[RMDB]
RNA sequence: GGGAACGACUCGAGUAGAGUCGAAAAUCGCCGCGGCAUGAGAAGCUCGACGGUGGUGCCGGGAUCGUCGCGCACGAUGUCAUGCUCCAGGGUGCUGGUCAGCCGAUGGCCUUUGGUGUGCCACUGAAUUCACGGAAGUAUUCGUACUUCCGUGAAUAAAAGAAACAACAACAACAAC
Reactivity to 2A3 in 0.01 (KOAc 150mM, MgCl2 10mM, bicine 150mM(pH8.5), 24C), signal-to-noise 3, nucleotides 027 to 126: u080c010g000c000c000g020c010g030g000c060a080u110g060a070g030a260a020g020c020u050c060g080a080c030g050g010u020g020g050u060g020c000c030g010g040g010a060u020c020g020u010c020g030c020g000c090a010c080g040a020u080g070u120c030a030u100g020c010u030c040c030a040g040g050g030u070g060c000u030g030g070u050c020a010g040c010c010g100a120u040g000g000c010c000u070u050u100g130g000u080g030u080g010c010c010a050c050u070g040a020
Reactivity to DMS in 0.01 (KOAc 150mM, MgCl2 10mM, bicine 150mM(pH8.5), 24C), signal-to-noise 6, nucleotides 027 to 126: u010c040g010c050c020g010c130g000g020c020a040u000g010a110g010a150a120g010c020u000c030g020a080c040g020g010u010g020g010u000g010c040c060g000g010g000a030u000c040g010u000c040g010c170g010c070a110c090g010a110u010g010u000c050a050u000g010c030u010c030c060a110g010g010g020u010g020c050u000g000g010u010c050a090g020c060c040g000a120u000g010g000c030c030u000u010u010g020g010u010g010u000g000c010c030a080c090u000g000a160
This 177-nucleotide RNA was probed chemically with 2A3 and DMS. For 2A3 the reverse transcriptase was SuperScript II with manganese. The RNA was probed in 150 mM KOAc, 10 mM MgCl2 and 150 mM bicine (pH 8.5) at 24 C. Values cover nucleotides 27 to 126.